[RMDB]
RNA sequence: GGGAACGACUCGAGUAGAGUCGAAAAGUACUUACUCUACAUGUGUGUCACUUGACGACCACUGUGAAGAGAGUAAAAUGUACAGUGGUUCUCUUGGGGCUCAAGCGUAACGUAGAGUGCUGGUCAACCAUUGCUUUGCAUUCGUGCAAAGCAAUGGAAAAGAAACAACAACAACAAC
Reactivity to 2A3 in 0.01 (KOAc 150mM, MgCl2 10mM, bicine 150mM(pH8.5), 24C), signal-to-noise 6, nucleotides 027 to 126: g050u060a010c010u070u020a010c000u010c000u020a010c030a080u170g080u030g010u000g000u070c010a020c030u020u040g020a040c120g000a010c010c000a000c010u000g000u010g080a170a090g110a010g050a020g140u270a020a120a060a140u210g060u120a010c000a000g000u010g020g000u100u010c000u000c000u000u040g020g000g000g030c010u030c060a110a080g070c070g160u130a040a070c050g010u010a000g010a000g060u010g030c060u080g000g050u040c030a030a020
Reactivity to DMS in 0.01 (KOAc 150mM, MgCl2 10mM, bicine 150mM(pH8.5), 24C), signal-to-noise 4, nucleotides 027 to 126: g040u010a040c040u010u050a040c000u010c020u000a000c010a160u010g020u040g000u010g000u000c010a010c030u000u010g000a030c290g020a000c000c000a000c000u010g020u000g020a070a020g000a100g020a130g010u060a040a050a110a140u020g010u030a020c000a030g010u000g000g010u000u000c300u000c000u000u010g010g000g000g000c020u010c050a020a110g020c070g010u030a070a100c140g010u000a000g000a020g020u000g010c140u000g000g000u010c060a100a130
Structure probing data (2A3 and DMS) for a 177-nucleotide construct. 2A3 adducts were read by reverse transcription with SuperScript II with manganese. Values cover nucleotides 27 to 126.